[RMDB]
RNA sequence: GGGAACGACUCGAGUAGAGUCGAAAAAACGUUGCAUGAUCGUAAAACAUGCCCGGCUUACCGUGAGCCGCCUUUGAAAGAAAGGUUUACACGGACUCUGUUGCGUUACGCACGUACCUAACUUGUGAAAUAAACCCCAUUUCGAUGGGGUUUAUUUAAAAGAAACAACAACAACAAC
Reactivity to 2A3 in 0.01 (KOAc 150mM, MgCl2 10mM, bicine 150mM(pH8.5), 24C), signal-to-noise 2, nucleotides 027 to 126: a000a000c000g000u010u000g020c000a000u000g010a050u180c030g090u180a090a090a090a000c000a000u010g000c000c000c000g000g000c000u010u110a110c000c010g000u000g000a010g020c000c000g030c010c000u020u010u040g070a100a040a000g040a040a010a000g030g000u010u030u060a010c000a010c010g010g000a030c030u050c050u070g140u080u040g000c010g030u050u050a080c190g030c010a030c030g010u050a080c020c010u060a080a110c070u230u220g050u080g270
Reactivity to DMS in 0.01 (KOAc 150mM, MgCl2 10mM, bicine 150mM(pH8.5), 24C), signal-to-noise 7, nucleotides 027 to 126: a090a070c010g000u000u000g010c010a010u000g000a030u040c000g000u020a020a080a010a010c010a000u000g010c000c030c010g000g000c010u000u020a100c010c000g020u010g000a060g000c010c010g020c010c010u000u010u000g000a140a110a220g010a090a010a010g020g020u110u020u010a140c010a010c020g010g000a200c270u020c110u020g010u000u000g010c060g010u000u010a110c100g010c050a030c040g010u010a050c090c070u010a050a070c120u020u010g000u010g010